[RMDB]
RNA sequence: GGGAACGACUCGAGUAGAGUCGAAAAUGGAAGGGCCAUCGCUCAAAGGAUAAAAGGUACUCCGGGGAUAACAGGCUGAUCCCUCCCAAGAGCUCACAUCGACGGAGUGGUUUGGCACCUCGAUGUCAUCUGACUCAAAAUUCGUUUUGAGUCAGAUAAAAGAAACAACAACAACAAC
Reactivity to 2A3 in 0.01 (KOAc 150mM, MgCl2 10mM, bicine 150mM(pH8.5), 24C), signal-to-noise 9, nucleotides 027 to 126: u130g030g050a040a060g040g020g010c010c010a070u040c040g020c030u030c040a080a070a050g080g010a040u130a110a140a010a020g080g020u060a050c020u010c030c010g000g000g010g010a020u060a200a050c040a070g140g000c020u030g020a050u050c010c000c000u010c000c000c000a020a030g040a010g020c030u060c050a080c030a090u030c020g040a030c080g050g020a060g010u070g070g000u090u100u100g040g010c010a040c030c000u000c010g010a020u060g050u040c010
Reactivity to DMS in 0.01 (KOAc 150mM, MgCl2 10mM, bicine 150mM(pH8.5), 24C), signal-to-noise 8, nucleotides 027 to 126: u020g000g000a070a050g010g000g010c040c020a070u010c090g010c030u000c060a070a120a130g000g010a100u020a060a060a100a100g010g000u010a060c060u010c030c040g010g000g000g000a070u010a090a080c190a100g000g000c060u030g010a080u010c030c010c020u000c010c000c020a070a150g010a060g010c080u030c130a060c120a050u000c010g000a130c280g000g000a080g010u010g020g000u010u020u020g000g010c050a060c010c000u000c030g010a060u010g010u010c200